[RMDB]
RNA sequence: GGGAACGACUCGAGUAGAGUCGAAAACGCGUAAUUAUGCUUGGCGCUAUUGUGCUGGCGAUUGGUUAUGCUCUGGUUGCCUGGUCUGGUCACGACGCCGGUAUCGUUUAUAUGGGUAUGGCGGCUAAUCGCCGUAAAUGUUCGCAUUUACGGCGAUAAAAGAAACAACAACAACAAC
Reactivity to DMS in 0.01 (KOAc 150mM, MgCl2 10mM, bicine 150mM(pH8.5), 24C), signal-to-noise 3, nucleotides 027 to 126: c110g020c060g020u010a050a060u000u000a060u000g030c060u010u010g040g000c030g010c030u010a080u010u010g030u000g010c020u000g000g020c020g000a070u000u010g020g010u000u000a040u000g010c030u010c050u010g010g010u000u010g020c030c020u000g010g010u010c040u010g020g010u010c060a110c100g020a080c040g010c030c020g020g030u000a040u000c060g010u000u000u020a130u010a120u020g000g010g020u000a030u000g000g000c020g000g010c090u010a050
Reactivity to 2A3 in 0.01 (KOAc 150mM, MgCl2 10mM, bicine 150mM(pH8.5), 24C), signal-to-noise 2, nucleotides 027 to 126: c030g010c020g000u020a030a070u160u120a110u210g020c020u040u300g030g000c000g000c070u130a200u160u180g070u060g040c050u030g060g040c030g090a110u080u090g060g020u030u030a040u130g000c000u000c030u110g010g000u120u080g050c000c000u000g010g070u020c000u010g030g050u080c040a010c130g080a030c010g010c000c000g000g000u030a040u040c010g030u010u080u110a300u090a120u160g080g010g010u040a040u060g040g010c080g000g000c000u030a030